[RMDB]
RNA sequence: GGGAACGACUCGAGUAGAGUCGAAAAAGUUACAGGAUGUGGUCGAUGAGAAAGUCACAACACUGUCCCCAUGGCUGGUCCGGGAGCGCUGCUGGCUGGCGAUCUGGAGUGGACCCGACCUUAUCAGUAAACCAUGUCACUUCGGUGACAUGGUUUAAAAAGAAACAACAACAACAAC
Reactivity to DMS in 0.01 (KOAc 150mM, MgCl2 10mM, bicine 150mM(pH8.5), 24C), signal-to-noise 1, nucleotides 027 to 126: a050g000u040u000a050c000a080g000g000a130u010g020u000g000g000u000c050g000a170u000g010a130g040a150a110a120g000u000c030a000c030a020a060c090a110c020u000g000u010c030c020c010c020a080u010g000g010c020u010g020g000u000c040c000g010g020g000a060g000c040g020c000u000g000c050u000g000g020c140u000g010g040c030g010a060u000c060u000g000g000a110g010u030g020g010a100c000c010c020g000a070c000c000u010u000a070u000c130a170g010

Notes
Chemical mapping of a 177-nucleotide RNA with DMS. Conditions: 150 mM KOAc, 10 mM MgCl2 and 150 mM bicine (pH 8.5), 24 C. The DMS profile rests on 990 reads. The data come from the RNA Mapping Database (RMDB), library OK2TST.